[RMDB]
RNA sequence: GGGAACGACUCGAGUAGAGUCGAAAAGUUUCUAAGUUCGCUUAGAAACAAAUCCAGCGCGGAAACGAACGUGCCUGAGCCUAUUCGUUAAAGAUUUUCAAAAAACGUUCCUCUUCGGAGGAACGAAGACGAAAAAUGAGUUCGCUCAUUUUUCGUCAAAAGAAACAACAACAACAAC
Reactivity to DMS in 0.01 (KOAc 150mM, MgCl2 10mM, bicine 150mM(pH8.5), 24C), signal-to-noise 1, nucleotides 027 to 126: g020u000u000u000c000u000a010a010g010u010u010c280g000c000u000u000a020g000a000a000a000c000a030a090a140u020c030c010a120g000c060g000c040g010g000a100a050a060c080g000a030a030c030g000u000g020c040c120u000g000a070g000c050c070u010a100u010u000c050g000u000u000a080a100a120g000a110u000u000u010u000c070a000a090a060a050a080a100c000g000u000u000c000c000u000c000u000u010c200g010g020a030g000g010a000a000c010g010a030a020
Reactivity to 2A3 in 0.01 (KOAc 150mM, MgCl2 10mM, bicine 150mM(pH8.5), 24C), signal-to-noise 1, nucleotides 027 to 126: g000u000u000u000c000u000a000a020g010u000u060c110g040c110u020u000a000g010a030a000a000c000a000a030a000u000c010c000a020g010c010g020c040g010g060a170a060a000c030g040a050a020c010g040u020g000c090c030u100g020a030g040c020c030u110a160u100u080c050g050u030u080a100a070a050g070a190u100u100u090u220c110a060a000a000a000a000a100c000g000u000u000c010c000u000c000u040u020c160g140g010a030g000g000a000a000c000g000a000a010